RNA sequence: GGGAACGACUCGAGUAGAGUCGAAAAAUGUCGGCUGAGGUCCAUGUUCUGGAGCGAGUGGUGUAGGCGCUGAAAACAUCUCUAUAUACUGGCUUGACUGUGGGGUGUCUGAUGAUGGUAUUGAUUCCGCUGAGUCAAUUGCUAUUGGCUGAUAGAGUAACGGUCUAUCUUUCGAGAUAGACCGUUAAAAAGAAACAACAACAACAAC
Reactivity to DMS in 0.01 (KOAc 150mM, MgCl2 10mM, bicine 150mM(pH8.5), 24C), signal-to-noise 2, nucleotides 027 to 156: a090u000g010u000c030g010g030c010u000g010a130g020g020u010c010c030a080u010g030u000u000c040u020g000g010a130g040c060g020a130g050u000g010g000u000g020u000a070g040g010c040g040c060u000g000a040a060a040a070c050a100u000c050u000c040u000a110u000a110u000a100c050u000g000g000c030u000u000g010a070c130u000g060u010g000g010g000g020u000g020u010c040u000g000a090u000g010a080u000g000g050u000a120u000u000g000a120u000u000c020c080g030c090u020g000a060g020u000c020a040a110u000u000g040c020u000a100u010u000g000g000c080u000g010a090u000a100g000a180g010
Reactivity to 2A3 in 0.01 (KOAc 150mM, MgCl2 10mM, bicine 150mM(pH8.5), 24C), signal-to-noise 2, nucleotides 027 to 156: a000u120g040u030c020g000g030c030u030g030a010g010g050u000c000c050a050u070g030u060u070c040u070g050g010a000g040c020g030a030g040u080g010g000u030g010u020a040g020g020c020g000c050u040g100a040a020a010a020c030a060u050c010u000c050u030a020u000a010u040a210c070u090g040g050c000u010u110g020a020c030u050g010u060g040g030g000g020u040g000u060c010u020g040a070u060g000a000u070g030g010u030a000u060u050g030a040u070u000c020c030g030c200u130g000a020g030u020c010a050a000u050u110g000c000u030a040u110u020g040g000c030u030g030a080u080a040g060a010g100